Source information:
An RNA of 177 nucleotides, treated with 2A3 and DMS and read out base by base.

RNA sequence: GGGAACGACUCGAGUAGAGUCGAAAAGAGGACGAGGGCGACCAGGAGGCCCUGGAUGAAGACGAUGAUGCCGGCGAUGAGCAUGAGGGAGCGCACCGGCCGCAUGCAGACGGUCCGAUACAGCUGCAUCCCACUCAAUCUUCGGAUUGAGUGGGAUAAAAGAAACAACAACAACAAC
Reactivity to 2A3 in 0.01 (KOAc 150mM, MgCl2 10mM, bicine 150mM(pH8.5), 24C), signal-to-noise 1, nucleotides 027 to 126: g080a000g000g050a010c030g010a050g030g030g030c050g010a020c030c000a050g080g070a020g100g010c030c000c030u000g010g000a050u150g020a000a070g040a020c020g030a040u120g020a050u090g040c030c050g040g020c040g090a110u080g020a020g000c070a010u110g010a100g040g000g000a050g000c010g000c000a020c010c050g040g000c040c030g000c000a030u110g020c000a010g060a090c020g040g030u010c050c000g060a040u040a090c040a010g040c000u050g030c050
Reactivity to DMS in 0.01 (KOAc 150mM, MgCl2 10mM, bicine 150mM(pH8.5), 24C), signal-to-noise 2, nucleotides 027 to 126: g010a130g000g010a070c080g000a060g000g020g010c070g000a120c080c050a080g000g000a140g010g010c080c020c010u010g040g000a110u030g000a100a090g000a090c110g000a080u020g010a110u000g000c070c030g000g000c040g010a110u000g000a110g010c030a100u010g000a100g010g010g000a020g020c060g010c060a090c030c030g010g010c020c000g020c060a070u000g010c120a020g010a140c050g000g000u000c010c050g000a110u010a110c150a130g000c020u010g010c060
The RNA was probed in 150 mM KOAc, 10 mM MgCl2 and 150 mM bicine (pH 8.5) at 24 C. The data come from the RNA Mapping Database (RMDB), library OK2TRN.